[RMDB]
RNA sequence: GGGAACGACUCGAGUAGAGUCGAAAAGACGCGAGAGACGCGAGACGCGCAAUGGAAGAAGCCGCAAUAGAUGAUACGAAGGAAGAGGCAAGACGGAGAGCGCGCAACGAUCUCAAAUAACCAAGAACCCUCCCUACCGAUUCGUCGGUAGGGAGGGAAAAGAAACAACAACAACAAC
Reactivity to 2A3 in 0.01 (KOAc 150mM, MgCl2 10mM, bicine 150mM(pH8.5), 24C), signal-to-noise 1, nucleotides 027 to 126: g100a000c040g000c010g060a020g000a000g000a170c000g020c000g030a030g060a030c000g000c010g000c050a030a000u110g000g000a000a050g030a060a000g000c000c000g110c080a030a000u020a080g170a070u150g080a120u250a140c080g010a000a100g110g000a070a110g000a070g010g000c000a000a000g020a000c020g080g000a050g000a000g110c000g000c000g010c060a040a000c080g040a240u000c010u020c040a080a110a000u290a000a000c120c010a130a000g040a010a040
Reactivity to DMS in 0.01 (KOAc 150mM, MgCl2 10mM, bicine 150mM(pH8.5), 24C), signal-to-noise 1, nucleotides 027 to 126: g040a200c000g000c080g000a200g000a040g000a030c070g000c030g090a220g000a300c050g000c010g090c000a000a100u000g000g010a000a020g050a220a000g000c000c000g080c070a140a260u070a030g000a220u000g000a170u070a080c170g000a070a000g000g000a000a170g000a040g090g020c040a000a000g000a300c070g030g000a000g000a130g000c010g000c000g000c070a140a090c060g060a250u000c000u050c060a090a290a090u100a000a300c000c020a000a080g070a040a300

Record summary:
The record gives the reactivity of an RNA of 177 nucleotides to 2A3 and DMS. DMS adducts were read by reverse transcription with MarathonRT. The 2A3 profile rests on 946 reads. The reactions ran in a buffer of 150 mM KOAc, 10 mM MgCl2 and 150 mM bicine (pH 8.5), at 24 C.